The data come from the RNA Mapping Database (RMDB), library TTRDES. Structure probing data (2A3 and DMS) for a 177-nucleotide construct. Reactivities are rounded to 0.1 and cut off at 0 and 3. For 2A3 the reverse transcriptase was SuperScript II with manganese. The RNA was probed in 150 mM KOAc, 10 mM MgCl2 and 150 mM bicine (pH 8.5) at 24 C. For 2A3, 2,969 sequencing reads were counted.
RNA sequence: GGGAACGACUCGAGUAGAGUCGAAAAGAUAUGGAUUUCAGCCAGUGGAGCCACGGAUCGGAAACGAUCCGUGUGGCGUUGAAACUGGAACUACUGAAAUCCUAAGUCAAACCGAUCUUCGGAUCGGCUUAAGAGAUGGCUUCGGCCAUCUCUUAAGAAAAGAAACAACAACAACAAC
Reactivity to 2A3 in 0.01 (KOAc 150mM, MgCl2 10mM, bicine 150mM(pH8.5), 24C), signal-to-noise 2, nucleotides 027 to 126: g050a050u110a060u230g040g010a020u000u000u000c030a030g030c000c000a000g030u020g000g110a020g000c000c000a000c030g000g020a030u060c020g020g040a050a030a020c030g000a000u030c020c020g000u030g020u010g000g000c000g040u140u060g000a090a030a020c010u010g000g090a020a020c140u300a020c010u060g000a020a000a000u020c000c010u040a130a020g030u040c040a020a050a170c020c010g000a010u020c020u070u100c300g130g010a010u000c020g020g020
Reactivity to DMS in 0.01 (KOAc 150mM, MgCl2 10mM, bicine 150mM(pH8.5), 24C), signal-to-noise 2, nucleotides 027 to 126: g000a030u010a300u000g010g000a010u010u000u000c000a020g000c000c000a000g010u000g010g000a140g010c030c000a020c010g010g010a010u000c000g000g000a080a070a260c000g010a000u000c000c030g020u010g000u020g010g030c020g020u000u010g000a120a110a050c020u000g000g010a100a040c080u000a300c010u000g000a010a010a010u000c000c000u010a040a090g020u000c040a090a120a250c010c000g000a010u000c000u010u000c280g020g000a010u000c010g010g000